[RMDB]
RNA sequence: GGGAACGACUCGAGUAGAGUCGAAAAAAUUGGCUUUGGGCUCGACGCUGUCGGUGCCUACCCUGGACGGCACGGUCGGGGUCCGGGUGCCCAAAGGCACCGCUGACGGCCGCAUUCUGCGUGUGCGCGAGCGAGCCAAGUUCGCUUGGCUCGCUCGAAAAGAAACAACAACAACAAC
Reactivity to 2A3 in 0.01 (KOAc 150mM, MgCl2 10mM, bicine 150mM(pH8.5), 24C), signal-to-noise 1, nucleotides 027 to 126: a000a000u080u110g030g020c060u040u050u110g010g010g000c000u000c030g050a030c030g070c300u110g050u180c050g070g000u000g040c000c000u020a050c010c010c010u000g140g000a000c010g010g040c160a070c130g140g080u050c010g000g000g070g000u000c000c000g000g000g000u100g040c000c000c020a000a040a030g010g000c000a010c050c000g000c040u140g000a060c090g000g020c080c000g000c000a050u130u000c000u150g000c000g090u090g030u040g000c070g010